[RMDB]
RNA sequence: GGGAACGACUCGAGUAGAGUCGAAAAUGAUCGUGCUUCCCCACAACCCCUUUAUAGCUGCUGUUUUGAACUCCAACAUGGAUAGGUUAAAGGUAAGGGGAUAAGAUAGUUCUUACCUAUUUACAGCUAUUUGAAUAGGAUUCGUCCUAUUCAAAUAAAAAGAAACAACAACAACAAC
Reactivity to DMS in 0.01 (KOAc 150mM, MgCl2 10mM, bicine 150mM(pH8.5), 24C), signal-to-noise 9, nucleotides 027 to 126: u010g010a090u000c110g020u000g000c110u000u000c010c000c000c040a040c060a130a270c030c020c010c040u010u010u010a090u010a100g020c060u000g010c050u000g010u000u000u000u000g010a060a100c120u000c030c030a090a110c160a110u000g000g010a090u000a060g000g010u000u010a040a100a050g000g010u000a010a020g010g000g010g010a090u000a050a110g010a140u010a110g000u000u000c010u000u000a020c010c000u000a070u000u000u000a060c060a060g010c070
Reactivity to 2A3 in 0.01 (KOAc 150mM, MgCl2 10mM, bicine 150mM(pH8.5), 24C), signal-to-noise 5, nucleotides 027 to 126: u130g020a070u120c060g010u040g020c030u020u030c000c010c050c010a020c010a020a070c020c000c010c000u060u140u100a230u120a080g060c050u070g010c010u020g070u070u020u070u080g030a020a020c010u010c040c020a070a100c040a300u160g040g000a040u050a070g060g040u040u080a110a110a030g000g010u010a010a000g030g010g020g000a010u090a060a040g070a040u110a040g080u070u010c000u000u020a020c010c010u030a140u080u080u030a050c030a020g010c000

Chemical mapping of a 177-nucleotide RNA with DMS and 2A3. For DMS the reverse transcriptase was MarathonRT. High 2A3 reactivity points to a flexible backbone, as in loops and unpaired stretches. Source: RMDB library OK2TRN, as collected in RNAgym. High DMS reactivity at an A or C suggests that its Watson-Crick edge is free. The RNA was probed in 150 mM KOAc, 10 mM MgCl2 and 150 mM bicine (pH 8.5) at 24 C. 2A3 adducts were read by reverse transcription with SuperScript II with manganese.